[RMDB]
RNA sequence: GGGAACGACUCGAGUAGAGUCGAAAAUCGGCCAUAUGCCGCUGCCGCCGUAUAUCGACCGUCCGGACGAAGACGCUGACCGCGAACUUUAUCAAACCGUUUAUAGCGAAAAACCGGGCGCGGUUGCUGCUACAUUCUGAUUCGUCAGAAUGUAGCAAAAAGAAACAACAACAACAAC
Reactivity to DMS in 0.01 (KOAc 150mM, MgCl2 10mM, bicine 150mM(pH8.5), 24C), signal-to-noise 4, nucleotides 027 to 126: u000c040g000g020c010c130a110u010a100u000g000c030c040g010c080u010g020c080c040g010c010c040g020u010a080u010a060u010c060g010a080c080c030g030u010c000c020g000g030a100c120g010a040a100g010a180c080g010c030u000g010a140c210c100g000c020g000a060a050c120u000u000u020a050u010c210a080a150a100c090c030g000u000u000u010a110u010a040g000c030g000a080a060a050a100a090c050c010g010g000g010c060g020c020g030g000u000u010g010c140
Reactivity to 2A3 in 0.01 (KOAc 150mM, MgCl2 10mM, bicine 150mM(pH8.5), 24C), signal-to-noise 3, nucleotides 027 to 126: u030c000g020g030c000c030a130u100a080u300g030c010c020g060c030u060g000c000c010g050c000c020g080u080a070u040a030u180c070g050a060c060c020g000u000c000c000g010g020a090c060g020a050a000g040a040c010g000c020u020g030a030c000c020g040c030g040a070a070c050u120u220u110a220u200c080a110a080a030c000c010g010u030u070u060a270u140a060g020c000g050a110a020a030a060a020c010c000g040g030g020c010g010c000g030g010u050u040g020c030

Structure probing data (DMS and 2A3) for a 177-nucleotide construct. Conditions: 150 mM KOAc, 10 mM MgCl2 and 150 mM bicine (pH 8.5), 24 C. The 2A3 profile rests on 1,924 reads. It was measured as part of the RMDB library OK2TRN.